The record gives the reactivity of an RNA of 207 nucleotides to DMS and 2A3. For DMS, 12,652 sequencing reads were counted. High 2A3 reactivity points to a flexible backbone, as in loops and unpaired stretches. Reactivities are rounded to 0.1 and cut off at 0 and 3. For DMS the reverse transcriptase was MarathonRT.

RNA sequence: GGGAACGACUCGAGUAGAGUCGAAAACGAUCAGUACGUUCGCGUACUGAUCGAAGCUAUUGGAGACAAUAGCAAGCCGCAGACAUUAAUUCCCAGUAUUAAUGAUUAGCACAAGUACCCACCUCUUGUGCACUGCGGCAACUGGGAUGGUGGGUGAAAUGAACAUAGGAUUCGUCCUAUGUUCAUUAAAAGAAACAACAACAACAAC
Reactivity to DMS in 0.01 (KOAc 150mM, MgCl2 10mM, bicine 150mM(pH8.5), 24C), signal-to-noise 4, nucleotides 027 to 156: c020g000a000u000c000a020g020u000a000c010g020u000u000c300g000c020g070u000a000c010u000g010a000u000c010g000a030a100g030c010u000a010u000u000g010g020a300g000a300c020a020a020u000a010g030c000a140a210g020c010c000g010c010a060g000a300c030a040u000u000a040a080u010u000c170c090c190a260g000u010a090u000u000a040a020u000g000a160u000u000a080g020c000a010c010a030a050g020u000a050c010c010c040a030c010c010u000c000u000u000g000u000g000c000a090c020u000g010c010g040g010c030a010a020c090u010g010g000g020a080u000g020g050u000g010g000g010u000g000a050
Reactivity to 2A3 in 0.01 (KOAc 150mM, MgCl2 10mM, bicine 150mM(pH8.5), 24C), signal-to-noise 4, nucleotides 027 to 156: c010g000a000u000c000a000g000u000a000c000g010u010u060c210g000c000g040u000a000c000u000g000a000u000c000g000a020a020g000c000u000a000u000u000g010g010a050g010a030c000a000a000u000a000g000c010a010a020g000c000c000g000c000a010g030a070c010a010u020u030a020a020u060u060c020c030c040a030g100u100a030u060u040a020a020u020g060a020u070u130a020g000c000a000c000a000a000g010u080a100c000c000c000a000c000c000u010c000u020u000g000u000g000c000a000c010u010g000c000g000g000c000a000a040c050u090g030g020g030a030u040g000g000u000g000g000g000u000g000a010